[RMDB]
RNA sequence: GGGAACGACUCGAGUAGAGUCGAAAAGUCAGCAUGCGGAGAUAACAACAGAUACAUCAUUUGCUGGCCAAAAUGAUCAACUGCUUCAUCCAGUGCUGCUGCUGCCAUAACCGGAUGACUAUCCUGCCCCACCACCGUCAUUCGUGACGGUGGUGGGAAAAGAAACAACAACAACAAC
Reactivity to 2A3 in 0.01 (KOAc 150mM, MgCl2 10mM, bicine 150mM(pH8.5), 24C), signal-to-noise 2, nucleotides 027 to 126: g040u050c000a000g000c030a000u150g140c080g180g000a030g040a020u100a030a070c110a040a000c000a120g050a010u070a080c030a050u100c000a000u080u020u120g030c050u080g000g000c010c020a030a090a000a030u070g000a040u010c030a020a040c020u040g030c000u130u110c020a070u030c000c030a000g000u010g030c000u020g010c030u020g020c000u020g000c060c000a080u080a040a090c010c000g000g000a030u010g030a110c020u080a030u030c000c000u050g050c000
Structure probing data (2A3) for a 177-nucleotide construct. It was measured as part of the RMDB library OK1LIB. Values cover nucleotides 27 to 126. The 2A3 profile rests on 998 reads. The RNA was probed in 150 mM KOAc, 10 mM MgCl2 and 150 mM bicine (pH 8.5) at 24 C.